[RMDB]
RNA sequence: GGGAACGACUCGAGUAGAGUCGAAAAGAUAUGGAUCCCGAUAGCGCAUGAGUGAUCUCGGAAACGAGAACUCAUGAACUACGCUAAAGGGAUCCUAAGUCAAAACAGGGAGGUUCGCCUCCCUGAAUCUUGACCUAUACUUCGGUAUAGGUCAAGAAAAAGAAACAACAACAACAAC
Reactivity to 2A3 in 0.01 (KOAc 150mM, MgCl2 10mM, bicine 150mM(pH8.5), 24C), signal-to-noise 1, nucleotides 027 to 126: g020a000u070a010u160g000g000a000u020c060c010c000g010a020u030a000g020c010g000c030a000u000g000a000g010u150g260a300u090c000u000c020g070g020a080a080a040c010g010a000g010a000a000c010u000c000a000u010g000a020a010c030u100a040c030g000c000u000a000a010a040g020g020g000a000u000c000c010u000a000a000g000u000c010a010a010a050a110c010a010g000g000g000a000g030g090u050u180c240g200c070c000u000c020c020c000u010g000a000a010
Reactivity to DMS in 0.01 (KOAc 150mM, MgCl2 10mM, bicine 150mM(pH8.5), 24C), signal-to-noise 2, nucleotides 027 to 126: g000a070u000a300u010g000g000a010u000c000c000c000g000a300u000a000g020c000g000c000a000u010g000a020g020u000g010a130u000c000u000c000g020g010a070a110a160c000g050a020g000a040a070c020u000c000a000u020g000a100a050c070u000a300c000g000c000u000a000a040a300g000g000g020a010u000c020c000u010a000a110g000u020c040a110a080a090a240c000a010g000g000g010a020g010g000u000u000c300g010c000c000u000c010c000c000u000g000a040a040
Background: The data come from the RNA Mapping Database (RMDB), library TTRDEL. Chemical mapping of a 177-nucleotide RNA with 2A3 and DMS. DMS adducts were read by reverse transcription with MarathonRT. For 2A3 the reverse transcriptase was SuperScript II with manganese. For DMS, 1,690 sequencing reads were counted.